[RMDB]
RNA sequence: GGGAACGACUCGAGUAGAGUCGAAAAUCGAUGGUCGGCGCCUUAAGCCGCACGGUGAACUCCAGGUCGUUGACCACGCGCAACCCGGACAUGGUGGUCCGGCUCUUAUCCCCUGGCGCGCCGGCCACGAGCGUAUUAGGUUCGCCUAAUACGCUCGAAAAGAAACAACAACAACAAC
Reactivity to DMS in 0.01 (KOAc 150mM, MgCl2 10mM, bicine 150mM(pH8.5), 24C), signal-to-noise 2, nucleotides 027 to 126: u010c090g020a180u000g040g010u000c020g010g010c010g000c010c200u010u000a060a110g010c110c010g010c060a070c080g020g040u000g000a040a070c070u010c030c050a100g000g010u020c050g010u000u010g010a060c040c040a170c130g010c040g000c070a090a090c230c020c010g010g000a080c010a100u000g020g010u010g000g000u000c040c020g000g000c070u000c030u000u000a100u000c020c010c000c170u000g000g000c140g010c010g020c020c000g000g010c020c000a040
Reactivity to 2A3 in 0.01 (KOAc 150mM, MgCl2 10mM, bicine 150mM(pH8.5), 24C), signal-to-noise 1, nucleotides 027 to 126: u080c020g010a040u060g000g000u030c000g000g030c020g020c020c050u170u190a100a040g030c070c020g020c030a010c090g040g000u050g050a060a030c040u050c060c070a120g000g040u070c010g060u030u070g030a040c040c000a020c080g080c010g000c060a040a030c050c020c000g000g000a050c060a060u180g110g090u070g030g020u090c000c070g020g010c010u030c000u090u230a210u190c030c010c000c020u040g100g030c010g000c040g000c040c000g000g000c010c000a010
Chemical mapping of a 177-nucleotide RNA with DMS and 2A3. For DMS, 1,472 sequencing reads were counted. For 2A3, 997 sequencing reads were counted. In probing experiments dimethyl sulfate is read out at A N1 and C N3, which are open when not base-paired.